[RMDB]
Record summary
The record gives the reactivity of an RNA of 177 nucleotides to 2A3 and DMS. For DMS, 1,820 sequencing reads were counted. Conditions: 150 mM KOAc, 10 mM MgCl2 and 150 mM bicine (pH 8.5), 24 C.
RNA sequence: GGGAACGACUCGAGUAGAGUCGAAAAGGCGAUACCCAGACCAUCGCCCGGUUUGCAGGUUCCAGCCCAGGUCAGUGCCGUCUCGGUGGCGAUACGUACCGAUCCGUGCCGGGCGGCCCCGGCGGCCGGUCACGAGCCAGUUCGCUGGCUCGUGACCAAAAGAAACAACAACAACAAC
Reactivity to 2A3 in 0.01 (KOAc 150mM, MgCl2 10mM, bicine 150mM(pH8.5), 24C), signal-to-noise 4, nucleotides 027 to 126: g060g040c030g040a020u080a100c000c050c000a020g030a030c040c020a030u050c040g040c020c020c020g010g010u020u070u140g060c050a050g030g040u080u030c030c020a010g040c020c000c010a030g080g000u030c050a040g020u010g170c020c010g050u060c090u090c110g100g060u170g040g030c010g000a020u050a140c090g050u080a170c040c100g010a010u010c020c020g040u020g020c000c000g020g000g000c000g000g020c010c000c000c020g040g000c030g020g010c020c010
Reactivity to DMS in 0.01 (KOAc 150mM, MgCl2 10mM, bicine 150mM(pH8.5), 24C), signal-to-noise 1, nucleotides 027 to 126: g000g000c000g000a140u000a060c090c000c000a130g010a080c130c030a010u020c000g000c030c030c150g000g040u020u010u020g020c030a000g000g000u000u030c020c000a120g000c000c030c040a170g020g010u010c100a080g010u050g020c000c030g010u000c020u000c070g060g000u000g000g020c060g000a030u000a050c070g000u050a070c110c040g000a040u020c280c090g040u000g000c010c000g000g000g000c040g000g000c000c070c060c000g000g000c080g000g000c150c050